[RMDB]
RNA sequence: GGGAACGACUCGAGUAGAGUCGAAAAUCAGAAUCAGGCCGGAGUGUUUAGCGCUCCAUAAACACGGUCGUACAUCCAGCCGGUAGCCUGGUUCCUUGCAUUGAGUGAUGUACGGAGUUUAUAGAGCAAAAGAAAGACCUGUUCGCAGGUCUUUCAAGAGUUAUGGGUAGUUCGCUACCCAUAACUCAAAAGAAACAACAACAACAAC
Reactivity to 2A3 in 0.01 (KOAc 150mM, MgCl2 10mM, bicine 150mM(pH8.5), 24C), signal-to-noise 2, nucleotides 027 to 156: u090c000a010g030a000a010u010c000a000g040g000c000c020g120g020a190g050u050g070u050u120u140a080g060c030g000c020u030c040c010a000u010a000a020a010c050a010c030g050g100u100c010g000u010a020c010a010u000c020c000a030g110c060c010g080g020u070a030g020c000c020u010g010g000u040u050c030c000u090u080g000c010a150u050u150g060a080g070u120g000a010u000g000u000a010c000g060g000a070g020u070u090u040a110u110a040g050a010g010c020a070a040a040a000g000a000a010a000g000a000c010c000u010g010u030u060c150g010c080a000g000g000u000c010u000u010u000c000a000a000

An RNA of 207 nucleotides, treated with 2A3 and read out base by base. 2A3 adducts were read by reverse transcription with SuperScript II with manganese. The reactions ran in a buffer of 150 mM KOAc, 10 mM MgCl2 and 150 mM bicine (pH 8.5), at 24 C.